[RMDB]
RNA sequence: GGGAACGACUCGAGUAGAGUCGAAAAGUCUGUGCGUUUCCAUUUGAGUAUCCUGAAAACGGGCUUUUCAGCAUGGAACGUACAUAUUAAAUAGUGGGAGUGCAUAGUGGCCCGUAUAGCAGGCAUUGAGGCGAGGAUUGUUUCGACAAUCCUCGAACGCUAUUCAAUCCUUCGGGAUUGAAUAGCGAAAAGAAACAACAACAACAAC
Reactivity to 2A3 in 0.01 (KOAc 150mM, MgCl2 10mM, bicine 150mM(pH8.5), 24C), signal-to-noise 2, nucleotides 027 to 156: g040u010c070u030g030u010g040c030g010u030u150u070c010c000a020u080u040u030g030a040g030u110a110u110c000c020u030g080a040a020a060a060c100g050g000g010c060u070u060u000u070c010a020g030c020a010u010g010g000a020a000c010g010u010a000c000a000u020a000u030u140a070a100a080u150a020g070u070g000g030g010a050g010u050g010c030a030u030a130g060u070g080g000c000c030c010g030u020a020u070a020g050c030a010g060g000c030a020u040u090g070a030g040g100c000g000a000g000g000a000u000u000g020u040u060u070c080g080a020c000a000a000u000c000c000u000c010g000a000a000
Reactivity to DMS in 0.01 (KOAc 150mM, MgCl2 10mM, bicine 150mM(pH8.5), 24C), signal-to-noise 1, nucleotides 027 to 156: g000u000c050u000g010u000g010c010g010u000u000u000c010c000a100u010u010u000g010a140g050u000a080u010c030c020u000g000a030a060a150a190c070g000g000g000c060u020u000u000u000c030a070g030c070a050u000g000g020a040a090c010g000u000a060c030a030u000a070u000u000a100a050a140u000a100g030u000g000g010g020a160g060u000g030c030a090u020a100g000u000g020g010c010c000c040g070u000a060u000a070g010c020a020g010g030c080a130u000u000g020a200g020g000c000g010a030g010g010a030u000u000g000u000u010u000c250g050a100c000a010a020u000c000c000u000c000g000a000a060
Conditions: 150 mM KOAc, 10 mM MgCl2 and 150 mM bicine (pH 8.5), 24 C. An RNA of 207 nucleotides, treated with 2A3 and DMS and read out base by base. The DMS profile rests on 2,757 reads. For 2A3, 1,535 sequencing reads were counted. For 2A3 the reverse transcriptase was SuperScript II with manganese.